[RMDB]
Overview:
This 177-nucleotide RNA was probed chemically with 2A3 and DMS. For 2A3, 9,847 sequencing reads were counted. For DMS, 3,585 sequencing reads were counted. The RNA was probed in 150 mM KOAc, 10 mM MgCl2 and 150 mM bicine (pH 8.5) at 24 C. For DMS the reverse transcriptase was MarathonRT.
RNA sequence: GGGAACGACUCGAGUAGAGUCGAAAAGAUAUGGACUCGAACUACACUAGCAGAGUGGCGAAGAACUUCUGUAAGAUCGGAAACGAUCUUACAGAAGGGAGCCACGAUCUAGUGCGAGUCCUAAGUCGAUUGUUGUAUUCUUCGGAAUACAACAAUCAAAAGAAACAACAACAACAAC
Reactivity to 2A3 in 0.01 (KOAc 150mM, MgCl2 10mM, bicine 150mM(pH8.5), 24C), signal-to-noise 3, nucleotides 027 to 126: g090a060u130a100u230g000g010a010c020u000c020g030a150a090c110u280a040c300a000c020u040a010g020c160a020g170a010g060u020g020g000c040g100a300a040g010a130a090c010u000u030c000u000g010u000a010a000g000a000u020c000g020g000a100a070a020c010g000a000u030c000u000u010a000c000a010g000a000a000g010g000g000a000g010c000c000a010c000g010a010u000c000u000a000g000u000g010c010g000a000g000u000c000c010u000a060a010g150u070c070
Reactivity to DMS in 0.01 (KOAc 150mM, MgCl2 10mM, bicine 150mM(pH8.5), 24C), signal-to-noise 4, nucleotides 027 to 126: g020a080u020a300u010g010g000a020c000u010c000g010a110a120c090u010a300c010a010c010u000a010g010c220a030g000a300g000u000g000g030c000g020a120a140g030a150a230c000u000u000c000u000g010u000a000a010g000a020u000c000g030g000a100a080a180c000g000a010u000c000u000u000a010c010a000g020a000a010g000g000g000a080g010c000c000a000c000g000a090u000c000u000a020g000u000g000c020g000a010g000u000c000c000u000a010a070g010u010c110